An RNA of 177 nucleotides, treated with DMS and read out base by base. Conditions: 150 mM KOAc, 10 mM MgCl2 and 150 mM bicine (pH 8.5), 24 C. For DMS, 949 sequencing reads were counted. In probing experiments dimethyl sulfate is read out at A N1 and C N3, which are open when not base-paired.
[RMDB]
RNA sequence: GGGAACGACUCGAGUAGAGUCGAAAAGACGAAGGCUGGUAAGCCGACGCGUGGAUGGGGACCCGGGUCGCGCUCUUGGAGGAAACUCCUUUGAGACUUGACCGGCGAGCCUUCUCCUGCAGAGCAUGUAUGCAAUAACCUUCGGGUUAUUGCAUACAAAAGAAACAACAACAACAAC
Reactivity to DMS in 0.01 (KOAc 150mM, MgCl2 10mM, bicine 150mM(pH8.5), 24C), signal-to-noise 2, nucleotides 027 to 126: g010a110c040g000a120a240g000g020c020u000g000g020u010a060a020g010c030c000g000a110c090g020c030g000u000g020g010a060u000g000g000g000g010a190c300c000c010g000g000g000u000c010g010c170g000c020u000c000u000u000g000g000a020g000g020a040a030a080c000u000c000c010u010u010u000g000a000g040a040c020u000u010g000a090c000c000g010g010c000g000a300g000c000c010u090u000c300u000c000c030u000g000c030a100g000a180g030c110a100u020